Annotation: Chemical mapping of a 207-nucleotide RNA with 2A3 and DMS. For DMS, 6,291 sequencing reads were counted. The 2A3 profile rests on 8,252 reads. Values are in units of 0.01, from 0 to 300, in steps of 10. For 2A3 the reverse transcriptase was SuperScript II with manganese. Conditions: 150 mM KOAc, 10 mM MgCl2 and 150 mM bicine (pH 8.5), 24 C. DMS adducts were read by reverse transcription with MarathonRT.
[RMDB]
RNA sequence: GGGAACGACUCGAGUAGAGUCGAAAAAUCGAGAGCUACUAUCACAGCCCAAGUGCUGCCUCUGCAGAAAGCAGUAGCCCAGAUGCUAUUGAGAACUGCUUACAAGAACUGCCACUUGGAAGCACCCUGAGAACUUGGCUUUACUUGGAAAUCACCAGUAUUAGUAUUUAUUCGUAAAUACUAAUACAAAAGAAACAACAACAACAAC
Reactivity to 2A3 in 0.01 (KOAc 150mM, MgCl2 10mM, bicine 150mM(pH8.5), 24C), signal-to-noise 8, nucleotides 027 to 156: a000u080c050g010a020g000a020g070c040u070a050c040u090a150u260c100a080c080a120g030c010c010c010a030a010g020u010g020c050u020g010c020c040u070c060u060g000c030a030g050a110a090a020g040c010a010g000u020a020g000c000c030c050a090g050a110u160g010c010u030a030u080u100g030a090g040a110a050c010u010g010c000u040u090a060c060a120a030g020a140a030c040u100g060c080c000a010c010u010u010g010g010a020a020g000c010a040c020c020c040u050g010a030g010a070a050c040u050u070g010g000c000u030u030u020a030c020u020u050g060g020a030a130a080u120c040a050c110c030a020
Reactivity to DMS in 0.01 (KOAc 150mM, MgCl2 10mM, bicine 150mM(pH8.5), 24C), signal-to-noise 3, nucleotides 027 to 156: a060u000c020g020a140g030a120g030c010u000a080c050u000a130u020c080a120c060a080g000c050c010c010a080a100g020u010g030c050u000g000c010c050u000c050u000g000c040a080g020a100a060a080g010c010a030g020u000a030g010c010c050c040a260g000a110u010g010c020u010a050u010u000g000a180g000a090a140c040u000g020c000u010u000a100c050a060a060g010a060a100c080u010g000c040c020a090c020u000u010g010g010a040a090g010c020a070c020c010c000u000g010a140g040a050a060c100u000u000g010g000c030u000u020u000a040c040u010u000g010g000a070a060a130u010c020a060c010c010a210